[RMDB]
RNA sequence: GGGAACGACUCGAGUAGAGUCGAAAAGAUAUGGAUCCAGUACAUAGCUUGGACCUAUGGUCGGAAACGACCAUAGCUAGCUAGUACGGAUCCUAAGUCAAAACAAUGUUCCUUCGGGAACAUUGAAUCAUAGGGCCUACUUCGGUAGGCCCUAUGAAAAAGAAACAACAACAACAAC
Reactivity to 2A3 in 0.01 (KOAc 150mM, MgCl2 10mM, bicine 150mM(pH8.5), 24C), signal-to-noise 1, nucleotides 027 to 126: g020a020u010a030u060g000g000a000u000c020c050a090g000u000a000c140a180u280a030g020c010u210u300g060g050a020c000c010u000a040u010g000g000u000c000g000g000a030a010a030c010g010a000c010c010a000u000a020g020c010u000a000g010c000u030a040g000u000a000c010g020g010a000u000c010c000u010a020a000g010u010c020a020a020a120a150c000a000a030u010g000u010u020c000c000u070u090c300g080g000g010a010a000c000a010u000u050g050a050a130
Reactivity to DMS in 0.01 (KOAc 150mM, MgCl2 10mM, bicine 150mM(pH8.5), 24C), signal-to-noise 2, nucleotides 027 to 126: g020a010u000a080u020g020g000a010u000c000c000a210g030u000a000c010a220u000a040g000c010u010u020g040g010a030c300c020u000a000u000g000g000u000c000g040g000a020a020a040c000g000a010c000c000a000u000a000g010c010u000a000g010c010u000a070g010u000a000c010g000g000a010u010c010c000u000a000a060g000u000c000a120a110a160a280c020a000a000u000g010u000u000c000c000u010u000c190g000g010g000a000a000c000a000u000u000g020a060a210

Conditions: 150 mM KOAc, 10 mM MgCl2 and 150 mM bicine (pH 8.5), 24 C. Chemical mapping of a 177-nucleotide RNA with 2A3 and DMS. It was measured as part of the RMDB library TTRDES. For 2A3 the reverse transcriptase was SuperScript II with manganese.